[RMDB]
RNA sequence: GGGAACGACUCGAGUAGAGUCGAAAAUAUUCUUAGCACCCCUUACGAAGUACGCCUAUUGUAAGAUCUCGCAGCAUCUAUGCCGCCUGUGUCGCUGCACGACCUAACCCAUUUAAAGCGAUUGGGCCCUGUAGAGAGACUUCGGUCUCUCUACAGGAAAAGAAACAACAACAACAAC
Reactivity to 2A3 in 0.01 (KOAc 150mM, MgCl2 10mM, bicine 150mM(pH8.5), 24C), signal-to-noise 4, nucleotides 027 to 126: u140a060u070u120c070u060u080a050g020c030a060c000c000c010c000u000u030a010c060g070a090a020g050u040a020c030g020c010c030u130a110u110u140g070u070a060a000g000a090u070c040u000c020g090c010a080g030c000a020u060c020u110a100u130g090c000c000g020c000c030u120g000u020g020u060c030g000c020u040g000c010a010c030g030a050c010c000u030a060a080c000c000c020a020u070u090u140a070a060a000g080c040g060a050u000u070g020g020g000c000
Reactivity to DMS in 0.01 (KOAc 150mM, MgCl2 10mM, bicine 150mM(pH8.5), 24C), signal-to-noise 2, nucleotides 027 to 126: u030a100u060u010c020u000u020a100g010c050a060c020c010c040c030u000u000a060c050g000a130a090g030u020a050c080g010c020c010u000a070u020u010g000u000a090a070g000a060u000c010u000c140g010c060a090g030c050a130u030c070u040a150u050g040c050c010g020c010c010u030g000u020g030u010c030g040c070u010g010c050a060c110g000a040c040c040u000a050a100c000c000c010a070u020u000u020a090a090a170g000c090g000a100u000u020g000g010g030c130
The data come from the RNA Mapping Database (RMDB), library OK1LIB. The record gives the reactivity of an RNA of 177 nucleotides to 2A3 and DMS. Values cover nucleotides 27 to 126. For DMS, 2,601 sequencing reads were counted. The RNA was probed in 150 mM KOAc, 10 mM MgCl2 and 150 mM bicine (pH 8.5) at 24 C.